[RMDB]
RNA sequence: GGGAACGACUCGAGUAGAGUCGAAAAGAUAUGGAUACUUCCAAACACUGAUGACCAAGCUCGGAAACGAGCUUGCAAGGUGUGGACGGGUAUCCUAAGUCAAACGGUCUCUCUUCGGAGAGACCGAGUUAGGAUGAUCGUUCGCGAUCAUCCUAACAAAAGAAACAACAACAACAAC
Reactivity to DMS in 0.01 (KOAc 150mM, MgCl2 10mM, bicine 150mM(pH8.5), 24C), signal-to-noise 3, nucleotides 027 to 126: g000a020u000a300u020g020g010a000u000a010c000u010u000c010c030a280a190a040c010a000c000u000g010a140u050g000a150c300c000a000a000g040c020u000c000g010g000a080a100a190c000g000a010g020c000u010u000g000c000a050a070g000g020u000g010u010g000g020a240c300g010g000g000u000a020u000c000c000u010a010a050g000u000c030a150a070a260c020g000g000u000c000u000c000u000c000u000u030c210g040g010a030g000a000g000a000c000c000g000a020
Reactivity to 2A3 in 0.01 (KOAc 150mM, MgCl2 10mM, bicine 150mM(pH8.5), 24C), signal-to-noise 2, nucleotides 027 to 126: g030a030u050a020u120g030g000a000u010a010c000u300u160c030c040a040a110a010c010a000c010u220g080a300u140g020a170c050c000a030a000g000c000u000c010g020g040a060a090a090c030g000a010g000c000u020u010g000c000a030a140g000g000u010g000u040g000g030a050c080g030g000g010u000a000u000c000c000u010a120a000g030u040c030a130a000a060c010g020g000u000c000u000c000u000c040u040u070c300g140g000a000g010a000g000a010c010c010g000a000

Source: RMDB library TTRDES, as collected in RNAgym. An RNA of 177 nucleotides, treated with DMS and 2A3 and read out base by base. The DMS profile rests on 1,560 reads. The 2A3 profile rests on 4,201 reads. Conditions: 150 mM KOAc, 10 mM MgCl2 and 150 mM bicine (pH 8.5), 24 C. For 2A3 the reverse transcriptase was SuperScript II with manganese.